[RMDB]
RNA sequence: GGGAACGACUCGAGUAGAGUCGAAAAGGCACUAUCUUCGGAUAGUGCCAAAACGGGAAAACGGCCUCCCGAAAAGAAAAGAUCGAAACGAUCAAAAGGCGGAAAUCUCCCGGUUCGCCGGGAGAAACCUAUUUAUGAGGUUCGCCUCAUAAAUAGGAAAAGAAACAACAACAACAAC
Reactivity to 2A3 in 0.01 (KOAc 150mM, MgCl2 10mM, bicine 150mM(pH8.5), 24C), signal-to-noise 3, nucleotides 027 to 126: g010g000c000a000c000u000a010u010c000u040u060c090g020g000a000u000a000g000u000g000c010c000a000a000a000a000c000g000g010g010a030a060a010a070c030g100g020c010c000u020c000c000c010g040a090a110a030a010g100a010a110a000a010g000a000u030c020g080a270a170a200c110g000a000u030c030a000a070a000a110g020g010c040g010g020a030a080a050u020c000u000c000c020c000g000g040u030u030c180g010c020c000g030g010g000a000g000a000a010a000
Reactivity to DMS in 0.01 (KOAc 150mM, MgCl2 10mM, bicine 150mM(pH8.5), 24C), signal-to-noise 3, nucleotides 027 to 126: g000g000c000a000c000u000a000u000c000u000u010c230g050g000a000u000a000g020u000g000c000c000a000a000a040a190c020g010g000g000a050a050a110a180c040g020g020c010c020u000c010c000c000g010a060a030a160a120g010a060a060a100a100g000a000u000c010g020a080a120a080c170g000a000u010c000a090a040a100a060g000g020c020g010g000a040a080a140u000c010u000c000c000c000g010g000u000u010c210g050c020c000g010g000g000a020g000a010a040a070